[RMDB]
Source: RMDB library OK2TST, as collected in RNAgym. This 177-nucleotide RNA was probed chemically with DMS and 2A3. For DMS the reverse transcriptase was MarathonRT. The RNA was probed in 150 mM KOAc, 10 mM MgCl2 and 150 mM bicine (pH 8.5) at 24 C.
RNA sequence: GGGAACGACUCGAGUAGAGUCGAAAAUGAGGUCGGCGCCCCGGACCAGCGCGGCCUCGCCGCACAGUUGCGGUCACUGCGGGUCGAUGUCAAACACGCCGAUGCGCUGCUGGCGUUGCGGCAGCUCGGCGUACCUACUCUUCGGAGUAGGUACGCCAAAAGAAACAACAACAACAAC
Reactivity to DMS in 0.01 (KOAc 150mM, MgCl2 10mM, bicine 150mM(pH8.5), 24C), signal-to-noise 2, nucleotides 027 to 126: u010g020a010g010g010u000c010g030g030c020g000c000c010c070c070g010g010a040c060c130a200g030c010g020c020g020g010c010c030u000c060g020c010c000g010c020a050c300a130g010u010u000g000c040g010g000u000c110a070c100u010g030c100g010g000g000u010c030g000a080u020g030u010c110a110a070a110c260a100c070g000c010c030g000a070u000g000c080g010c010u000g010c040u010g010g010c050g010u000u020g000c040g000g000c000a100g020c010u000c050
Reactivity to 2A3 in 0.01 (KOAc 150mM, MgCl2 10mM, bicine 150mM(pH8.5), 24C), signal-to-noise 2, nucleotides 027 to 126: u050g010a020g070g000u020c060g160g070c020g080c030c000c010c010g070g050a060c030c020a020g010c040g000c020g040g000c000c010u010c020g000c010c000g170c000a050c040a160g170u260u110g090c000g030g020u070c040a030c140u100g070c070g070g000g010u020c030g030a100u090g090u150c060a040a080a090c050a040c120g000c000c020g070a080u090g040c030g000c040u090g040c020u040g090g020c070g070u040u090g000c010g020g040c000a020g010c030u070c090